[RMDB]
RNA sequence: GGGAACGACUCGAGUAGAGUCGAAAAGAUAUGGACCUCAGUCAAGCUCUCUACCCACCUCGGAAACGAGAGGAGAGAACUACUUGCUUGAGGUCCUAAGUCAAAGCAUGUACUUCGGUACAUGCAAGAUUGUACCCGUGUUCGCACGGGUACAAUCAAAAGAAACAACAACAACAAC
Reactivity to DMS in 0.01 (KOAc 150mM, MgCl2 10mM, bicine 150mM(pH8.5), 24C), signal-to-noise 2, nucleotides 027 to 126: g000a070u000a300u010g010g000a010c000c000u000c000a020g000u020c010a000a000g010c140u000c000u000c000u000a160c040c050c100a230c260c020u000c000g000g000a120a050a120c000g000a020g010a080g000g000a050g000a010g010a030a030c060u020a140c020u000u000g000c000u000u000g010a000g010g000u000c010c000u000a000a070g020u000c050a080a130a180g020c010a000u000g020u010a000c000u000u000c120g020g020u000a000c010a000u010g000c000a020a110
Reactivity to 2A3 in 0.01 (KOAc 150mM, MgCl2 10mM, bicine 150mM(pH8.5), 24C), signal-to-noise 3, nucleotides 027 to 126: g070a030u060a020u190g000g000a000c000c000u010c000a020g060u040c010a010a000g000c000u000c000u020c000u300a300c030c020c010a210c080c010u010c000g040g020a080a110a100c030g040a010g000a020g040g020a020g010a010g000a010a010c080u220a010c030u060u010g010c000u030u060g010a000g000g000u000c000c000u000a010a000g020u020c020a090a000a010g010c010a010u010g000u000a000c000u030u120c300g200g020u000a000c000a000u000g000c000a000a010